Structure probing data (2A3 and DMS) for a 177-nucleotide construct.
For 2A3 the reverse transcriptase was SuperScript II with manganese.
Conditions: 150 mM KOAc, 10 mM MgCl2 and 150 mM bicine (pH 8.5), 24 C.
[RMDB]
RNA sequence: GGGAACGACUCGAGUAGAGUCGAAAAAAGGGUCAACAUCUGCCAUGGGUUUGCCAGGACCUUCUUUGAGGGCUCGCCAGGCAAUACCACGACGAGCCGGAUUCCACUUAGGGGCGCCGACAGCCGAAGGCGCCUACGUAUUCGUACGUAGGCGCCUAAAAGAAACAACAACAACAAC
Reactivity to 2A3 in 0.01 (KOAc 150mM, MgCl2 10mM, bicine 150mM(pH8.5), 24C), signal-to-noise 1, nucleotides 027 to 126: a000a020g070g010g010u070c020a030a010c030a170u020c060u040g050c090c010a110u070g030g070g020u060u080u040g000c040c000a000g040g000a040c010c030u050u040c020u100u120u200g050a050g010g000g060c040u040c090g040c030c000a000g030g030c030a050a010u080a120c030c000a050c040g050a010c020g000a020g030c000c000g050g010a020u030u010c010c000a080c030u020u050a030g000g020g000g060c030g030c020c010g020a030c030a010g000c000c010g120a030
Reactivity to DMS in 0.01 (KOAc 150mM, MgCl2 10mM, bicine 150mM(pH8.5), 24C), signal-to-noise 4, nucleotides 027 to 126: a070a050g010g010g000u000c020a060a090c070a100u010c060u000g030c040c060a090u000g010g000g000u000u010u000g020c000c020a180g010g000a150c010c010u000u010c020u000u010u040g000a110g010g000g020c220u000c090g000c060c040a110g030g010c010a060a070u020a270c050c010a080c070g000a070c040g010a040g000c040c020g000g000a140u000u000c030c030a090c120u000u010a080g010g000g010g000c050g010c030c040g010a050c100a120g010c030c050g000a120